The record gives the reactivity of an RNA of 177 nucleotides to DMS and 2A3. The data come from the RNA Mapping Database (RMDB), library OK1LIB. For 2A3, 1,922 sequencing reads were counted. DMS (dimethyl sulfate) methylates the pairing face of unpaired adenines and cytosines. The RNA was probed in 150 mM KOAc, 10 mM MgCl2 and 150 mM bicine (pH 8.5) at 24 C. For 2A3 the reverse transcriptase was SuperScript II with manganese.
RNA sequence: GGGAACGACUCGAGUAGAGUCGAAAAGAGUAAUGGGCGCCCAAGGUGAGAUGAAGCUGUAGUCUCACUGGAAGGACUAGAGGUUAGAGGAGACCCGCCCAAAACAAGUAACAGCUUCAUCAAGAGAAGUAGUACGGACUUUCGAGUCCGUACUACUAAAAGAAACAACAACAACAAC
Reactivity to DMS in 0.01 (KOAc 150mM, MgCl2 10mM, bicine 150mM(pH8.5), 24C), signal-to-noise 2, nucleotides 027 to 126: g000a120g000u010a050a160u000g010g000g010c000g030c000c000c000a270a160g020g010u000g000a090g000a010u000g020a040a100g000c060u010g050u000a300g010u000c040u030c010a030c020u000g000g000a170a160g010g010a020c080u000a010g000a120g010g010u000u000a060g000a100g000g050a110g000a110c010c020c020g040c010c010c010a040a070a260a080c090a080a170g000u030a040a020c020a040g000c010u030u010c040a010u010c050a120a130g000a170g030a080
Reactivity to 2A3 in 0.01 (KOAc 150mM, MgCl2 10mM, bicine 150mM(pH8.5), 24C), signal-to-noise 3, nucleotides 027 to 126: g110a000g040u270a100a050u120g000g000g000c000g020c000c000c010a010a030g010g000u020g010a060g000a020u010g020a030a000g030c010u020g000u010a010g010u010c010u000c010a000c010u000g050g030a060a030g020g070a020c050u090a030g010a020g090g000u090u060a040g050a160g300g000a050g100a060c000c020c020g000c000c000c000a030a040a000a000c130a080a010g080u150a020a060c010a000g010c000u050u030c020a050u050c060a180a020g060a000g030a150